[RMDB]
RNA sequence: GGGAACGACUCGAGUAGAGUCGAAAACAAUCCGUAAUGGGUACACCUGGUAUGCGUUUGAUGGGUGCAGAUUCCUUUAUUAUGGCACACCAAGUAUCCUCUGGUACUAAAGGUCUAAUUACUGAUCGGCACUCACCAUGUUCGCAUGGUGAGUGCCAAAAGAAACAACAACAACAAC
Reactivity to 2A3 in 0.01 (KOAc 150mM, MgCl2 10mM, bicine 150mM(pH8.5), 24C), signal-to-noise 1, nucleotides 027 to 126: c050a040a040u040c010c020g090u130a110a020u050g060g020g030u000a010c030a000c030c100u020g020g020u050a050u090g010c080g040u010u080u080g060a030u020g050g020g020u000g010c010a030g020a260u180u200c030c030u000u080u000a090u100u000a070u070g130g030c000a010c010a000c080c040a000a020g050u030a050u060c030c000u030c100u230g050g010u010a030c020u080a010a110a070g040g020u010c000u010a090a050u210u000a060c030u050g000a010u150c060
Background: The record gives the reactivity of an RNA of 177 nucleotides to 2A3. Values are in units of 0.01, from 0 to 300, in steps of 10. Source: RMDB library OK2TST, as collected in RNAgym. The reactions ran in a buffer of 150 mM KOAc, 10 mM MgCl2 and 150 mM bicine (pH 8.5), at 24 C.